RNA sequence: GGGAACGACUCGAGUAGAGUCGAAAAGAGCUGGCAGUUCUGUUACCCGAGCUGUUGUUGAUCGGCCAGCUGAUCGACCGAUCGGGCAUGGCCUGGUGUAUACAGGCAUUCGGCCGCCAGGAGAUGCAUGUAGUCGUUUGUUCGCAAACGACUACAUAAAAGAAACAACAACAACAAC
Reactivity to DMS in 0.01 (KOAc 150mM, MgCl2 10mM, bicine 150mM(pH8.5), 24C), signal-to-noise 2, nucleotides 027 to 126: g000a090g000c020u010g000g010c040a140g000u000u030c030u000g010u000u020a120c010c020c010g050a140g040c100u020g000u020u000g000u000u020g000a020u010c010g000g020c040c040a080g010c040u030g000a020u000c070g000a090c070c010g020a010u020c050g000g010g000c010a030u010g000g040c000c000u010g000g010u000g010u030a110u080a040c140a060g000g010c050a160u020u020c080g010g000c020c010g000c020c020a070g000g000a050g000a040u010g000c050
Reactivity to 2A3 in 0.01 (KOAc 150mM, MgCl2 10mM, bicine 150mM(pH8.5), 24C), signal-to-noise 4, nucleotides 027 to 126: g050a010g000c010u010g010g030c020a090g010u120u110c080u080g040u040u050a140c000c000c010g010a040g020c010u040g010u050u010g000u010u030g040a010u030c020g000g000c030c000a030g020c080u050g070a160u040c020g100a100c050c020g000a010u020c000g030g030g000c040a030u070g250g010c020c030u030g000g030u030g030u010a170u050a090c080a080g000g080c010a040u180u230c050g040g000c010c000g000c020c030a000g010g010a080g010a010u070g030c040